Chemical mapping of a 177-nucleotide RNA with DMS and 2A3. The reactions ran in a buffer of 150 mM KOAc, 10 mM MgCl2 and 150 mM bicine (pH 8.5), at 24 C. It was measured as part of the RMDB library OK1LIB.

RNA sequence: GGGAACGACUCGAGUAGAGUCGAAAAUCUUCUUAACAUCUGUUGAGCCUCUGUUUCCUCGAUUUCUCAGUGAGCUAUUCAGUUCGUCUUUUUUGGGAAUCCCCGAGUCAAUCAUUGGACUGAUACAGAACUUGGUUUCAUUCGUGAAACCAAGUUCAAAAGAAACAACAACAACAAC
Reactivity to DMS in 0.01 (KOAc 150mM, MgCl2 10mM, bicine 150mM(pH8.5), 24C), signal-to-noise 1, nucleotides 027 to 126: u010c110u070u000c020u020u000a000a140c020a020u040c050u010g000u000u010g050a110g000c020c010u020c010u000g050u000u000u000c090c050u020c000g010a070u000u010u000c000u010c030a090g000u030g000a080g010c010u000a030u010u000c070a020g030u000u000c060g000u000c050u000u000u000u000u000u000g000g000g000a080a070u010c030c020c010c050g000a150g000u000c040a050a130u020c060a120u000u000g000g030a090c000u080g000a070u020a070c160a040
Reactivity to 2A3 in 0.01 (KOAc 150mM, MgCl2 10mM, bicine 150mM(pH8.5), 24C), signal-to-noise 2, nucleotides 027 to 126: u030c010u110u020c000u090u070a150a030c100a140u090c020u060g070u050u120g130a030g020c000c030u040c040u060g010u010u040u040c000c020u020c000g010a040u050u020u020c040u010c030a050g020u020g100a020g010c000u030a070u090u080c040a030g030u020u060c010g030u070c070u000u070u100u010u060u080g010g000g050a060a060u030c030c020c010c000g020a000g050u050c030a050a050u070c040a060u060u070g040g000a040c000u050g000a010u050a090c060a120